The record gives the reactivity of an RNA of 177 nucleotides to 2A3 and DMS. Conditions: 150 mM KOAc, 10 mM MgCl2 and 150 mM bicine (pH 8.5), 24 C. DMS adducts were read by reverse transcription with MarathonRT. Reactivities are given for positions 27 through 126. The data come from the RNA Mapping Database (RMDB), library RFM100.
[RMDB]
RNA sequence: GGGAACGACUCGAGUAGAGUCGAAAAGGCGUUUAUAGCGCCUCGGGGGUUCGAAUCCCCCCCUCUCCGCCAGAUUGUGGUGACGCGUUGUGCCAAUGCCGCGUGAGUUUCGCCGGCGUCAUUGGGGUGCCUUUUACGUUUUCGAACGUAAAAGGCAAAAAGAAACAACAACAACAAC
Reactivity to 2A3 in 0.01 (KOAc 150mM, MgCl2 10mM, bicine 150mM(pH8.5), 24C), signal-to-noise 1, nucleotides 027 to 126: g000g000c030g000u010u010u090a300u100a020g000c000g030c020c000u000c000g040g000g010g000g000u030u030c030g040a070a070u080c000c000c000c000c000c000c000u040c010u000c090c000g030c060c000a030g140a300u140u140g070u070g110g010u090g040a070c060g070c060g130u000u060g000u030g020c020c080a050a080u060g000c000c010g060c060g090u040g060a070g060u110u020u140c140g000c060c000g110g000c000g020u040c000a050u000u000g000g000g000g010
Reactivity to DMS in 0.01 (KOAc 150mM, MgCl2 10mM, bicine 150mM(pH8.5), 24C), signal-to-noise 1, nucleotides 027 to 126: g050g030c000g000u000u000u130a090u070a110g010c000g000c000c000u010c110g000g000g000g000g000u010u000c210g000a300a070u090c000c000c000c000c000c000c000u000c010u030c010c000g050c000c050a100g020a190u030u070g040u000g000g000u000g010a130c150g000c100g020u010u000g010u000g000c000c000a070a050u000g000c000c000g010c000g000u000g000a110g010u000u000u020c010g090c160c080g000g010c050g000u050c000a000u050u000g000g010g080g000